[RMDB]
RNA sequence: GGGAACGACUCGAGUAGAGUCGAAAAGAAGCCUUCGGGCAAUGUGGUGUUCGGACUGACAACCACUCCGCGAAAGGCUGCAAGAAGUCUCUUGGAAUAGAGCACGAAACAGGGUGAUAGUCCCGUAGCGGUAAAAGACAUUCGUGUCUUUUACCGCAAAAGAAACAACAACAACAAC
Reactivity to DMS in 0.01 (KOAc 150mM, MgCl2 10mM, bicine 150mM(pH8.5), 24C), signal-to-noise 4, nucleotides 027 to 126: g000a090a030g010c000c020u000u010c010g010g000g010c300a050a010u040g030u010g010g010u000g000u000u080c100g000g030a140c250u040g020a030c020a080a030c000c000a020c000u000c100c030g000c100g020a060a040a080g020g000c000u010g000c150a140a120g000a120a040g010u010c010u000c020u000u000g010g030a300a080u010a020g000a010g030c020a040c010g020a220a110a080c020a150g010g000g000u010g020a140u020a070g000u020c000c000c000g000u020a090
Reactivity to 2A3 in 0.01 (KOAc 150mM, MgCl2 10mM, bicine 150mM(pH8.5), 24C), signal-to-noise 3, nucleotides 027 to 126: g090a010a000g020c000c000u000u000c000g000g010g020c140a030a070u100g000u010g000g040u000g060u050u160c080g020g160a190c080u120g000a020c030a030a070c010c000a010c000u000c010c070g140c030g110a080a050a030g020g000c000u010g010c000a040a050g040a040a010g070u070c000u000c000u030u020g070g050a040a040u040a110g030a000g000c040a000c020g040a050a080a040c040a060g000g020g020u040g050a170u050a080g020u020c000c010c010g000u000a000
Background:
Conditions: 150 mM KOAc, 10 mM MgCl2 and 150 mM bicine (pH 8.5), 24 C. Chemical mapping of a 177-nucleotide RNA with DMS and 2A3. It was measured as part of the RMDB libraries RFM100 and RFMREP.